[RMDB]
About this RNA:
The record gives the reactivity of an RNA of 177 nucleotides to DMS and 2A3. DMS adducts were read by reverse transcription with MarathonRT. The RNA was probed in 150 mM KOAc, 10 mM MgCl2 and 150 mM bicine (pH 8.5) at 24 C. Values cover nucleotides 27 to 126.
RNA sequence: GGGAACGACUCGAGUAGAGUCGAAAAUGGAUGCGGUGCGCUCGGAAGGGGGCCCCUCGCCUAGAGGGUUGUCAAGCGAGCAGCUAGGCGAACCGCCAAACGAACCGCCAAUCGAACCGCCAAUCGACCAUCACUCGUAGUUCGCUACGAGUGAUGGAAAAGAAACAACAACAACAAC
Reactivity to DMS in 0.01 (KOAc 150mM, MgCl2 10mM, bicine 150mM(pH8.5), 24C), signal-to-noise 1, nucleotides 027 to 126: u010g000g000a020u000g010c090g030g000u000g020c160g100c010u010c050g000g060a070a150g000g000g000g000g000c110c000c010c110u050c000g000c130c110u100a130g000a030g000g000g040u020u050g040u000c100a040a170g000c070g040a100g000c090a060g000c000u000a190g000g010c010g000a000a160c080c010g000c070c080a010a060a190c010g000a170a130c020c000g000c030c070a160a050u000c060g000a030a170c030c020g000c060c070a070a100u020c050g010a210
Reactivity to 2A3 in 0.01 (KOAc 150mM, MgCl2 10mM, bicine 150mM(pH8.5), 24C), signal-to-noise 3, nucleotides 027 to 126: u190g120g000a000u110g040c000g000g000u060g030c100g000c010u040c000g070g030a130a160g070g030g000g000g000c000c010c000c010u000c000g020c010c000u000a010g000a010g070g160g010u080u170g090u060c070a090a050g120c010g030a000g050c000a010g000c040u000a010g000g000c020g040a070a070c040c030g080c010c030a000a210a000c010g020a020a020c040c000g000c020c000a040a030u100c030g030a000a050c000c000g020c010c020a060a060u080c070g040a050